[RMDB]
RNA sequence: GGGAACGACUCGAGUAGAGUCGAAAAAGGUGAUUUCUCCUGCACCUUGAUCAAUGGAGGAACUCGACUUUGCUGUGGGUCCCAAAGGGACCUUAGGUGCAGACAGUUACCGGCGGUGAAGUGUGAGCAUAGGUUCGUGUCUUCGGACACGAACCAAUCUAUCCCUCGUCUUCGGACGAGGGAUAGAAAAAGAAACAACAACAACAAC
Reactivity to 2A3 in 0.01 (KOAc 150mM, MgCl2 10mM, bicine 150mM(pH8.5), 24C), signal-to-noise 1, nucleotides 027 to 156: a000g010g010u020g000a030u120u020u000c010u000c040c000u220g020c000a000c000c030u030u270g040a020u050c070a030a020u300g010g000a020g000g030a020a040c000u030c020g000a000c000u010u020u010g000c020u000g030u070g050g000g000u000c050c000c000a110a110a040g020g000g000a010c100c000u020u050a010g000g000u000g000c010a060g080a280c030a010g000u000u120a000c000c010g020g000c010g020g000u020g020a040a000g020u120g090u160g070a010g030c150a100u120a280g020g000u000u000c010g020u000g000u000c030u050u190c250g070g000a010c000a000c000g000a000a000c000c000a000a000
Conditions: 150 mM KOAc, 10 mM MgCl2 and 150 mM bicine (pH 8.5), 24 C. An RNA of 207 nucleotides, treated with 2A3 and read out base by base. Source: RMDB library M2RFPK, as collected in RNAgym. 2A3 adducts were read by reverse transcription with SuperScript II with manganese.